This 177-nucleotide RNA was probed chemically with DMS and 2A3. DMS adducts were read by reverse transcription with MarathonRT. Values are in units of 0.01, from 0 to 300, in steps of 10. High 2A3 reactivity points to a flexible backbone, as in loops and unpaired stretches. In probing experiments dimethyl sulfate is read out at A N1 and C N3, which are open when not base-paired.
RNA sequence: GGGAACGACUCGAGUAGAGUCGAAAAAAGACCGUGAUUGGCCUUUGCAUAUUAAGUGUGACUUAGUUAGAGAGACCACGGUUUAAUCGCUGUGGCCUACUCUUAUACAGAAUGGAAUCCUAGUGUAAAGCUAUUCUUAGUUCGCUAAGAAUAGCUUAAAAGAAACAACAACAACAAC
Reactivity to DMS in 0.01 (KOAc 150mM, MgCl2 10mM, bicine 150mM(pH8.5), 24C), signal-to-noise 9, nucleotides 027 to 126: a020a010g010a040c010c000g020u010g010a130u030u040g010g010c020c010u000u000u000g010c060a060u010a070u010u020a050a070g010u000g010u000g010a100c050u000u010a080g010u010u010a030g000a020g010a060g000a050c010c000a000c000g000g010u000u000u000a110a100u040c300g000c000u010g020u000g000g010c020c000u010a060c000u000c000u000u010a050u010a090c130a080g000a090a070u020g010g010a070a100u000c010c010u000a070g020u020g010u010a080
Reactivity to 2A3 in 0.01 (KOAc 150mM, MgCl2 10mM, bicine 150mM(pH8.5), 24C), signal-to-noise 6, nucleotides 027 to 126: a000a000g080a020c020c000g030u070g060a140u090u140g030g000c000c000u040u020u060g020c030a020u060a050u170u210a170a130g040u040g050u060g120a070c030u060u060a030g040u050u040a010g020a000g010a000g010a030c010c010a000c000g000g010u030u020u030a040a020u070c020g000c030u010g000u010g020g010c000c010u050a130c000u000c000u000u000a020u020a020c030a020g180a120a140u150g040g040a030a000u040c000c020u040a060g040u040g040u240a070